An RNA of 177 nucleotides, treated with 2A3 and DMS and read out base by base. Source: RMDB library OK1LIB, as collected in RNAgym. The RNA was probed in 150 mM KOAc, 10 mM MgCl2 and 150 mM bicine (pH 8.5) at 24 C.

[RMDB]
RNA sequence: GGGAACGACUCGAGUAGAGUCGAAAAGAAACUUCGAUCGAUGCGAACACUCACUCCUAUGAAAUAAGCAUCGAUCGAGGGAAAAUAAAAGGGAGUGAGUGUGAAAGCGGAAACGCGAAAAAGAAAAGGGUAUCUAAAACUUCGGUUUUAGAUACCCAAAAGAAACAACAACAACAAC
Reactivity to 2A3 in 0.01 (KOAc 150mM, MgCl2 10mM, bicine 150mM(pH8.5), 24C), signal-to-noise 2, nucleotides 027 to 126: g070a010a100a000c000u010u000c000g020a010u000c000g000a000u000g000c000g030a080a000c000a000c000u010c030a000c000u020c000c000u060a140u120g180a100a070a070u200a200a060g010c000a000u010c000g000a010u020c000g000a000g000g000g020a000a100a060a000u220a120a100a010a020g020g000g000a000g000u000g000a010g000u000g000u000g010a000a000a000g000c000g010g030a020a000a070c000g010c000g090a060a080a000a050a000g160a000a090a010a000
Reactivity to DMS in 0.01 (KOAc 150mM, MgCl2 10mM, bicine 150mM(pH8.5), 24C), signal-to-noise 1, nucleotides 027 to 126: g030a090a140a130c010u000u000c000g000a040u000c000g050a000u000g000c000g030a120a040c000a020c000u000c010a010c000u000c010c000u000a170u010g020a110a020a130u040a020a090g010c000a000u010c000g010a000u000c000g030a000g000g000g000a110a030a100a080u050a050a090a190a150g000g000g020a000g010u000g010a000g000u000g000u000g000a090a050a100g030c030g000g000a140a040a130c000g010c000g000a020a030a060a070a060g000a090a080a050a120